[RMDB]
RNA sequence: GGGAACGACUCGAGUAGAGUCGAAAAGGUGUUACGUCAGCCAUGAGGGUUACCGUCAGCCUCAUGGUUGUCACAGAGAUGUGACAACGCUGACCAUAUAGGUAACCGCUGACUAUAUGGUAACACAGCAGAGCUGUACAUUCGUGUACAGCUCUGCAAAAGAAACAACAACAACAAC
Reactivity to DMS in 0.01 (KOAc 150mM, MgCl2 10mM, bicine 150mM(pH8.5), 24C), signal-to-noise 2, nucleotides 027 to 126: g010g000u010g000u010u000a010c020g030u000c090a020g010c020c080a030u010g000a070g030g010g010u000u000a020c010c020g000u000c000a080g000c030c300u010c100a130u000g020g020u010u000g000u000c000a000c000a020g000a210g010a190u000g000u000g000a000c000a000a000c000g010c020u000g000a030c020c250a050u000a100u010a090g010g000u010a020a010c010c020g000c010u000g000a010c010u000a060u000a030u000g000g000u000a030a000c000a000c030a140
Annotation:
This 177-nucleotide RNA was probed chemically with DMS. The reactions ran in a buffer of 150 mM KOAc, 10 mM MgCl2 and 150 mM bicine (pH 8.5), at 24 C. Values cover nucleotides 27 to 126. For DMS, 1,656 sequencing reads were counted.